[RMDB]
RNA sequence: GGGAACGACUCGAGUAGAGUCGAAAAGCCCAUAUGUUCGCAUAUGGGCAAAAGCAGAUCUGAGCAUGCGAGCUCUCUGCGACAAAAGUCAACGCAAUUAAAAAACACGUCACUUCGGUGACGUGAAGCUAAACUUUUACUUCGGUAAAAGUUUAGCAAAAGAAACAACAACAACAAC
Reactivity to DMS in 0.01 (KOAc 150mM, MgCl2 10mM, bicine 150mM(pH8.5), 24C), signal-to-noise 2, nucleotides 027 to 126: g020c000c010c000a000u000a000u000g000u010u010c210g010c010a020u000a020u000g000g000g020c000a010a010a040a090g030c020a000g010a120u000c180u010g010a000g030c030a070u010g000c070g010a200g000c010u000c000u000c000u000g000c010g010a070c190a050a070a080a140g000u000c100a080a050c040g020c030a060a120u000u010a010a050a030a090a060a130c000a020c010g000u000c000a000c010u000u010c180g020g010u000g010a000c000g010u000g000a030a060
Reactivity to 2A3 in 0.01 (KOAc 150mM, MgCl2 10mM, bicine 150mM(pH8.5), 24C), signal-to-noise 4, nucleotides 027 to 126: g000c000c000c010a000u010a010u000g010u010u070c220g000c110a000u020a000u030g010g000g000c020a050a050a010a000g000c000a000g010a050u030c100u230g000a000g020c030a040u130g070c050g090a050g010c000u000c000u000c000u010g000c010g010a010c050a030a190a020a000g100u110c040a060a090c050g000c050a020a050u170u300a160a150a030a020a000a000c000a000c000g000u010c000a000c000u030u110c210g110g000u000g000a000c010g000u000g000a000a000